[RMDB]
An RNA of 177 nucleotides, treated with 2A3 and DMS and read out base by base. The reactions ran in a buffer of 150 mM KOAc, 10 mM MgCl2 and 150 mM bicine (pH 8.5), at 24 C.
RNA sequence: GGGAACGACUCGAGUAGAGUCGAAAAUGAUCGAGAGAUCUAACGAUGUACGCGAGUCUGGUGCACCGACUCGAGCGAAAGCUCGGUCGAAAGACCGCGUACAUCGGUCGGCAAGUGUACAGUCGACACCGUGACUCCUGUUCGCAGGAGUCACGGUAAAAGAAACAACAACAACAAC
Reactivity to 2A3 in 0.01 (KOAc 150mM, MgCl2 10mM, bicine 150mM(pH8.5), 24C), signal-to-noise 1, nucleotides 027 to 126: u100g000a010u020c010g020a000g010a000g010a090u010c000u000a070a030c000g000a000u010g000u010a000c000g010c000g100a140g090u000c010u020g070g110u150g120c100a070c100c030g000a000c030u050c190g000a000g020c000g020a080a010a010g000c000u010c000g000g020u000c000g000a070a010a000g000a000c000c020g020c020g000u020a010c010a000u000c000g000g000u000c010g010g000c030a080a080g140u040g130u170a060c040a030g000u000c010g010a000c010
Reactivity to DMS in 0.01 (KOAc 150mM, MgCl2 10mM, bicine 150mM(pH8.5), 24C), signal-to-noise 2, nucleotides 027 to 126: u010g010a000u000c000g020a290g000a210g010a000u000c000u000a100a260c010g020a000u010g000u000a010c000g030c000g000a140g040u000c010u010g010g020u000g020c080a180c180c020g090a020c000u000c000g000a000g030c010g010a110a080a100g000c000u000c000g020g010u000c010g000a030a030a020g000a000c000c000g010c010g020u000a000c000a000u000c000g020g030u000c000g010g010c020a030a120g010u010g010u000a050c140a110g010u000c000g000a010c070
Description:
Source: RMDB library OK2TRN, as collected in RNAgym. The 2A3 profile rests on 1,618 reads. For DMS, 1,265 sequencing reads were counted.